[RMDB]
An RNA of 177 nucleotides, treated with DMS and read out base by base.
The reactions ran in a buffer of 150 mM KOAc, 10 mM MgCl2 and 150 mM bicine (pH 8.5), at 24 C.
Values cover nucleotides 27 to 126.
RNA sequence: GGGAACGACUCGAGUAGAGUCGAAAAGAUAUGGAGAAUGUUAGCUGGAGCUCCACGAAGUCUUCCAUAUCGGAAACGAUAUGGAAGCCGAGUGGAGCGUUGAAAGCUAACCGCUUCUCCUAAGUCACAGUUUCAACUUGUUCGCAAGUUGAAACUGAAAAGAAACAACAACAACAAC
Reactivity to DMS in 0.01 (KOAc 150mM, MgCl2 10mM, bicine 150mM(pH8.5), 24C), signal-to-noise 1, nucleotides 027 to 126: g010a080u000a300u020g000g020a000g010a170a010u010g000u000u010a000g000c000u000g000g020a130g000c010u000c000c000a010c000g000a200a220g000u000c000u000u000c000c000a000u000a000u000c010g000g010a170a170a230c030g000a010u000a000u010g010g020a010a010g000c000c010g000a300g030u000g010g000a000g000c020g010u000u010g010a180a100a060g000c000u000a000a000c030c000g000c030u000u000c020u010c000c000u000a030a060g000u030c030a200